[RMDB]
RNA sequence: GGGAACGACUCGAGUAGAGUCGAAAAAGUCUUUGACAUUGGCCCCAAAAGAGUACAAAUUGGUAGGUUCUGACAACAUUGGAGCCAUUUAGACAUUUUUAUCUUUCUCUUUCACAUGCACUAAUGCCAGUGGUGUCAUUUUAGCUCUUGCUCAGUAGCCAAUACUAGUUUUCGAACUAGUAUUGGCAAAAGAAACAACAACAACAAC
Reactivity to 2A3 in 0.01 (KOAc 150mM, MgCl2 10mM, bicine 150mM(pH8.5), 24C), signal-to-noise 4, nucleotides 027 to 156: a000g020u020c030u090u090u140g050a050c030a100u050u050g040g020c020c000c000c010a000a080a030a010g100a020g030u100a070c100a050a120a090u130u090g050g010u140a110g030g050u110u050c030u070g060a050c040a100a010c010a080u010u060g010g000a000g000c020c000a010u090u050u050a020g020a020c020a050u050u050u000u070u130a100u030c040u020u170u020c030u010c000u010u120u080c090a070c020a080u070g020c010a020c070u100a090a040u100g020c040c020a030g030u030g020g020u010g000u030c040a070u030u050u050u080a010g000c010u000c010u080u100g010c040u040c050a050g220u300a020
Reactivity to DMS in 0.01 (KOAc 150mM, MgCl2 10mM, bicine 150mM(pH8.5), 24C), signal-to-noise 2, nucleotides 027 to 156: a100g020u000c020u010u010u020g000a130c110a160u010u000g040g010c010c020c020c040a110a020a060a120g000a090g050u000a300c090a060a070a110u000u000g030g020u000a100g000g000u000u000c080u010g030a050c020a060a040c050a300u000u010g030g000a060g000c030c040a080u010u000u000a000g010a050c020a050u000u000u010u020u020a090u040c060u000u000u000c040u000c000u000u000u000c080a080c100a110u010g000c060a150c040u000a070a060u000g010c060c040a060g020u000g040g020u000g000u020c040a060u010u010u000u010a110g040c020u000c030u010u010g000c010u000c060a100g000u010a260
Chemical mapping of a 207-nucleotide RNA with 2A3 and DMS. DMS adducts were read by reverse transcription with MarathonRT. Values cover nucleotides 27 to 156. It was measured as part of the RMDB library OK3TST. For 2A3 the reverse transcriptase was SuperScript II with manganese.